[RMDB]
RNA sequence: GGGAACGACUCGAGUAGAGUCGAAAAAGCUCCUGAUACGUCAGGAGCAGGAGAUGAUGAGCUUGGCCGCUACCCGAGUGAUGAGGGCCAAACUCCGGUGCUGAUCACUGCGGUUACGACCGCAGAAGAACUACGCCCAAUUCGUUGGGCGUAGUUCAAAAGAAACAACAACAACAAC
Reactivity to DMS in 0.01 (KOAc 150mM, MgCl2 10mM, bicine 150mM(pH8.5), 24C), signal-to-noise 2, nucleotides 027 to 126: a120g010c020u000c020c000u000g000a020u090a010c190g020u000c030a000g040g030a000g010c010a000g000g000a110g010a100u030g000a200u010g000a040g000c120u010u010g010g020c050c000g050c120u000a150c060c010c020g030a220g020u010g000a060u020g010a050g000g000g000c000c000a010a010a020c060u000c020c130g020g050u000g010c020u010g000a110u010c110a260c000u000g000c000g060g020u000u000a100c260g010a080c000c000g000c000a000g000a030a130
Reactivity to 2A3 in 0.01 (KOAc 150mM, MgCl2 10mM, bicine 150mM(pH8.5), 24C), signal-to-noise 3, nucleotides 027 to 126: a000g000c000u000c000c000u000g000a020u010a040c240g090u010c000a000g010g010a010g000c030a000g010g020a150g000a030u250g020a030u110g010a010g100c090u010u010g000g010c010c020g050c130u100a150c020c030c040g060a030g140u240g070a100u090g070a060g030g000g000c000c010a000a010a060c040u010c000c000g000g030u150g040c050u080g060a010u070c010a010c060u000g030c000g010g000u010u060a150c260g040a010c060c000g000c000a000g000a010a000

Annotation: An RNA of 177 nucleotides, treated with DMS and 2A3 and read out base by base. For DMS the reverse transcriptase was MarathonRT. 2A3 adducts were read by reverse transcription with SuperScript II with manganese. The reactions ran in a buffer of 150 mM KOAc, 10 mM MgCl2 and 150 mM bicine (pH 8.5), at 24 C. High 2A3 reactivity points to a flexible backbone, as in loops and unpaired stretches.